[RMDB]
RNA sequence: GGGAACGACUCGAGUAGAGUCGAAAAUUGAGCAAAAUGAAUUUUUUGCUGGCUGCCGCUCAGUGGCGCAUCAACGGUGUAACAGGUUGAUGAAUGCACUGCUGAUUCACUAAGCGCUUAGCUGUGAUCCAUGGUCCUGGUUCGCCAGGACCAUGGAAAAAGAAACAACAACAACAAC
Reactivity to 2A3 in 0.01 (KOAc 150mM, MgCl2 10mM, bicine 150mM(pH8.5), 24C), signal-to-noise 1, nucleotides 027 to 126: u090u270g050a000g000c000a000a000a000a160u120g160a140a240u000u000u000u000u000u000g070c000u040g050g000c020u080g000c000c000g000c000u000c040a000g000u000g000g000c070g000c090a000u060c000a000a000c000g000g010u020g010u040a200a040c100a180g090g090u020u050g020a040u140g010a210a000u140g000c000a000c000u000g020c000u060g040a050u030u000c000a000c060u000a000a000g000c000g010c060u040u190a000g000c000u050g010u000g110a000
Reactivity to DMS in 0.01 (KOAc 150mM, MgCl2 10mM, bicine 150mM(pH8.5), 24C), signal-to-noise 1, nucleotides 027 to 126: u020u050g000a100g010c000a000a000a000a000u050g000a030a010u010u070u000u000u000u010g000c000u020g000g000c010u000g010c300c000g000c000u010c050a000g000u000g020g010c300g030c300a000u010c050a000a040c000g000g000u050g000u000a040a220c120a160g010g010u020u030g020a130u000g000a070a080u000g000c040a010c000u000g020c120u080g000a030u030u040c020a060c000u050a020a030g000c000g010c120u000u040a040g010c000u000g010u040g020a050

The record gives the reactivity of an RNA of 177 nucleotides to 2A3 and DMS.
For 2A3, 563 sequencing reads were counted.
The data come from the RNA Mapping Database (RMDB), library OK1LIB.
For DMS, 1,353 sequencing reads were counted.
Values cover nucleotides 27 to 126.